This 177-nucleotide RNA was probed chemically with 2A3. Reactivities are given for positions 27 through 126.

[RMDB]
RNA sequence: GGGAACGACUCGAGUAGAGUCGAAAACUUUCUUUUUUACUAUCAUUACCUCAUGAACUAUUUCUUGAAUGAGUAUAUGUAUUUUAUUUCCUAUAUCGGACGCAUUCAUUGGAAAAUAUACCAUGUCGUGCCCAAGACCAUUCGUGGUCUUGGGCACAAAAGAAACAACAACAACAAC
Reactivity to 2A3 in 0.01 (KOAc 150mM, MgCl2 10mM, bicine 150mM(pH8.5), 24C), signal-to-noise 1, nucleotides 027 to 126: c000u000u030u030c000u000u140u120u050u280u280a020c160u000a000u300c090a090u000u250a000c000c000u110c000a020u000g050a110a000c020u180a110u280u070u070c000u000u110g070a050a000u000g000a000g160u000a090u000a000u070g000u000a200u030u010u010u010a000u300u000u180c000c000u270a200u070a000u300c110g050g000a000c000g000c000a020u020u000c090a000u300u300g180g000a000a000a020a000u300a090u090a160c090c000a000u020g050u020c070

The data come from the RNA Mapping Database (RMDB), library OK1LIB. The RNA was probed in 150 mM KOAc, 10 mM MgCl2 and 150 mM bicine (pH 8.5) at 24 C.